[RMDB]
RNA sequence: GGGAACGACUCGAGUAGAGUCGAAAAGAUAUGGAUGAAGGGAGCCUAGUGCCUACCCACCUCGGAAACGAGAGGGCACAGGGCGACGAUCUUCAUCCUAAGUCAAAGUAGACGUUCGCGUCUACAAGCAAUAGUACCCGUUCGCGGGUACUAUUGCAAAAGAAACAACAACAACAAC
Reactivity to DMS in 0.01 (KOAc 150mM, MgCl2 10mM, bicine 150mM(pH8.5), 24C), signal-to-noise 1, nucleotides 027 to 126: g030a060u040a210u020g000g000a030u000g010a030a010g000g010g000a010g040c010c000u000a240g030u000g020c020c000u030a070c010c000c060a300c150c000u000c000g000g010a170a100a140c000g000a000g000a180g000g040g040c000a000c000a300g000g000g020c030g010a060c190g000a030u000c000u000u000c000a000u000c000c000u000a050a050g000u000c160a080a070a140g010u000a000g000a040c000g000u000u020c180g020c000g000u010c000u000a000c010a050a110
Reactivity to 2A3 in 0.01 (KOAc 150mM, MgCl2 10mM, bicine 150mM(pH8.5), 24C), signal-to-noise 1, nucleotides 027 to 126: g030a010u250a090u300g010g000a000u000g000a020a000g000g000g000a010g000c000c000u090a100g010u000g010c000c050u090a260c000c030c010a040c010c020u000c010g020g030a080a080a080c000g000a000g000a040g050g000g000c000a000c040a050g000g000g000c000g080a140c020g000a000u010c000u020u000c000a010u000c000c000u000a040a020g080u050c120a090a000a240g020u000a000g010a020c000g040u080u070c300g010c020g040u000c000u000a000c030a040a010
This 177-nucleotide RNA was probed chemically with DMS and 2A3.
The RNA was probed in 150 mM KOAc, 10 mM MgCl2 and 150 mM bicine (pH 8.5) at 24 C.
The 2A3 profile rests on 1,607 reads.
For DMS the reverse transcriptase was MarathonRT.
Values cover nucleotides 27 to 126.
For 2A3 the reverse transcriptase was SuperScript II with manganese.
DMS (dimethyl sulfate) methylates the pairing face of unpaired adenines and cytosines.